[RMDB]
RNA sequence: GGGAACGACUCGAGUAGAGUCGAAAACGUAACUACGCAUAAGAGACUUUGCUAAGUUUUAGGUAAAAUACAAGUCCCAGAUACGGAGCAAGUCUCAACCACUGUACAUACCUGAAUGUGUAAUUACAUCACUGUGAGAGGUGCCACAGUAAAUGCAUAAUCAGCUAGUAUUCGUACUAGCUGAUUAAAAAGAAACAACAACAACAAC
Reactivity to 2A3 in 0.01 (KOAc 150mM, MgCl2 10mM, bicine 150mM(pH8.5), 24C), signal-to-noise 9, nucleotides 027 to 156: c050g030u040a030a030c030u070a020c070g020c040a050u080a220a060g010a000g000a030c040u170u150u140g010c010u030a050a100g040u050u060u060u120a050g020g030u100a070a090a070a050u210a100c060a060a080g090u040c010c010c000a030g030a080u080a030c020g030g000a020g010c010a000a020g010u000c010u000c000a000a010c020c020a070c040u080g030u180a060c030a130u140a100c010c040u100g110a190a050u060g030u000g000u050a020a060u050u060a030c020a060u130c030a030c030u020g000u030g030a060g020a030g110g110u060g020c020c030a010c000a000g020u060a020a080a090u110g000c020a010
Reactivity to DMS in 0.01 (KOAc 150mM, MgCl2 10mM, bicine 150mM(pH8.5), 24C), signal-to-noise 4, nucleotides 027 to 156: c100g010u000a060a040c020u000a030c040g010c040a060u020a160a190g010a130g010a070c020u010u000u000g030c030u010a100a190g010u000u000u000u000a080g030g010u010a050a090a080a170u010a110c120a070a140g010u000c020c010c000a060g020a080u010a030c020g020g000a100g010c020a050a080g010u000c020u010c020a090a100c070c060a070c070u000g020u000a070c060a160u010a060c070c020u000g010a080a070u000g020u000g010u010a030a060u010u000a020c020a080u000c050a040c010u000g020u010g010a110g010a120g020g010u000g010c060c020a010c020a030g030u000a070a060a050u000g000c080a150